[RMDB]
RNA sequence: GGGAACGACUCGAGUAGAGUCGAAAAGGAGCUUGUGGAAGGCGAAACAGGAGUAAUCCCGCGUAGAAACAGGAAUUCUUUCCUUCCUUUCUUCUGCGGUUUCCUUCCUUUGCGCGCCACUCGACCCCUCGCCCCCUUGCGCUGUCGCUUCGGCAACCCCAGUAUACACGUUCGCGUGUAUACUGGGAAAAGAAACAACAACAACAAC
Reactivity to 2A3 in 0.01 (KOAc 150mM, MgCl2 10mM, bicine 150mM(pH8.5), 24C), signal-to-noise 2, nucleotides 027 to 156: g050g010a050g010c020u020u010g030u010g030g020a020a010g080g090c020g000a010a020a070c300a070g020g000a000g000u030a020a050u110c040c000c010g000c000g000u010a020g010a060a200a300c300a190g040g040a020a060u290u150c100u080u100u030c020c000u010u020c000c030u020u000u000c010u020u010c020u140g000c020g010g010u000u000u000c010c000u000u040c000c000u000u010u010g000c020g010c000g000c010c000a000c000u000c000g300a300c000c000c010c010u010c030g040c000c000c010c010c030u100u110g000c030g070c130u110g060u210c020g020c090u160u070c030g010g020c010a030a100c010
Description: Structure probing data (2A3) for a 207-nucleotide construct. Source: RMDB library VIROID, as collected in RNAgym. Reactivities are rounded to 0.1 and cut off at 0 and 3. The 2A3 profile rests on 1,422 reads.